[RMDB]
RNA sequence: GGGAACGACUCGAGUAGAGUCGAAAAAUAAAGCGUAAUCGCAUCCCAGUAGCAAAGAGCAGCGUAUAGGCGAAAGCCGAACUCAAGAUCGCAUCGGGCUAAGAUGCGAUCGUAGCCACGCAAAAAACAAGCAUAAGCUGUUCGCAGCUUAUGCUUGAAAAGAAACAACAACAACAAC
Reactivity to 2A3 in 0.01 (KOAc 150mM, MgCl2 10mM, bicine 150mM(pH8.5), 24C), signal-to-noise 2, nucleotides 027 to 126: a030u110a000a090a000g020c000g040u070a160a100u200c030g000c020a000u020c000c010c010a000g060u100a000g000c050a040a100a020g060a040g010c080a010g010c030g050u100a040u090a140g000g010c000g050a040a000a010g040c010c020g000a020a010c000u050c050a090a060g000a000u000c010g000c000a000u000c030g000g090g090c040u100a090a030g000a000u010g000c000g000a000u010c000g010u010a000g030c020c030a030c030g090c000a050a110a000a000a000a000
Reactivity to DMS in 0.01 (KOAc 150mM, MgCl2 10mM, bicine 150mM(pH8.5), 24C), signal-to-noise 3, nucleotides 027 to 126: a090u010a050a070a080g000c010g000u000a110a140u000c030g020c000a130u000c010c000c010a140g000u000a060g020c080a050a040a110g000a110g000c080a040g000c040g020u000a080u010a140g010g000c000g020a060a060a180g020c000c000g010a060a050c110u010c050a090a090g000a000u000c010g010c000a000u000c000g000g030g010c250u010a050a100g000a010u000g000c000g000a000u000c000g000u000a060g020c100c110a030c100g030c060a000a010a070a070a030a130